[RMDB]
RNA sequence: GGGAACGACUCGAGUAGAGUCGAAAAUAGCGUGAUCAUUGAUGGCAACUGUGAUGGACGGGGAAAAUCAACCAGAUCCACCACGGAUAGCGGGAAAGUUAUUCCUGAAUGGUGUUGCCGCUCCUGCACAGACCUUAGGAUUCGUCCUAAGGUCUGUAAAAGAAACAACAACAACAAC
Reactivity to 2A3 in 0.01 (KOAc 150mM, MgCl2 10mM, bicine 150mM(pH8.5), 24C), signal-to-noise 3, nucleotides 027 to 126: u100a040g020c030g060u030g040a060u070c060a030u030u150g090a090u150g190g010c000a040a020c050u010g010u030g050a070u020g000g010a000c020g020g010g000g090a040a100a010a250u120c030a030a060c030c010a030g000a070u000c010c000a000c000c010a010c000g020g020a070u100a030g060c070g000g010g110a030a060a040g150u210u110a180u150u070c010c020u010g070a040a050u140g050g030u080g030u080u100g010c020c010g000c010u030c000c000u020g000c080
Reactivity to DMS in 0.01 (KOAc 150mM, MgCl2 10mM, bicine 150mM(pH8.5), 24C), signal-to-noise 5, nucleotides 027 to 126: u000a080g010c070g020u000g000a070u000c070a080u000u000g030a100u000g020g010c040a090a090c020u000g030u010g000a030u000g010g010a050c050g020g010g000g000a050a070a100a120u010c290a090a100c010c010a090g010a170u000c010c000a010c030c010a020c040g000g010a060u000a100g020c030g000g000g000a040a070a160g000u000u010a140u000u000c000c020u010g010a070a060u000g000g000u000g000u000u010g010c050c010g020c070u000c020c010u010g010c220